This 177-nucleotide RNA was probed chemically with DMS and 2A3. The 2A3 profile rests on 3,898 reads. The RNA was probed in 150 mM KOAc, 10 mM MgCl2 and 150 mM bicine (pH 8.5) at 24 C. Reactivities are given for positions 27 through 126. For DMS, 6,451 sequencing reads were counted. DMS adducts were read by reverse transcription with MarathonRT.
[RMDB]
RNA sequence: GGGAACGACUCGAGUAGAGUCGAAAAUGACGCCACGCCAGGCGCUGGAGUGGAUCUAUCGGCUGAAAAGUCUGGUGUAAACGUGUCAGACCCGAUAGCGCCGCGCUAUCGGGUCUGCGCGCCGGAACACUAUUACCCGGUUCGCCGGGUAAUAGUGAAAAGAAACAACAACAACAAC
Reactivity to DMS in 0.01 (KOAc 150mM, MgCl2 10mM, bicine 150mM(pH8.5), 24C), signal-to-noise 3, nucleotides 027 to 126: u010g000a060c100g010c010c010a070c060g010c030c030a020g000g020c090g010c040u020g020g000a050g010u010g010g010a140u020c080u020a110u040c020g010g000c020u010g010a140a140a120a080g030u000c010u010g000g010u000g020u020a050a090a250c040g020u000g010u040c000a000g010a020c000c000c020g040a030u010a020g030c050g040c180c170g010c170g010c000u010a040u010c010g020g020g040u020c000u000g010c030g020c000g010c040c070g020g020a120a190
Reactivity to 2A3 in 0.01 (KOAc 150mM, MgCl2 10mM, bicine 150mM(pH8.5), 24C), signal-to-noise 4, nucleotides 027 to 126: u120g030a020c060g020c050c010a020c010g000c000c020a060g100g070c030g010c070u020g010g030a080g030u120g030g090a070u040c030u080a110u100c050g060g010c040u100g090a060a060a060a060g020u000c020u030g000g000u020g020u110a070a130a010c000g000u000g080u120c000a000g000a000c000c010c000g000a000u010a010g010c090g030c210c150g130c140g010c030u000a000u000c000g000g000g000u000c000u000g000c000g000c000g020c010c010g060g030a040a020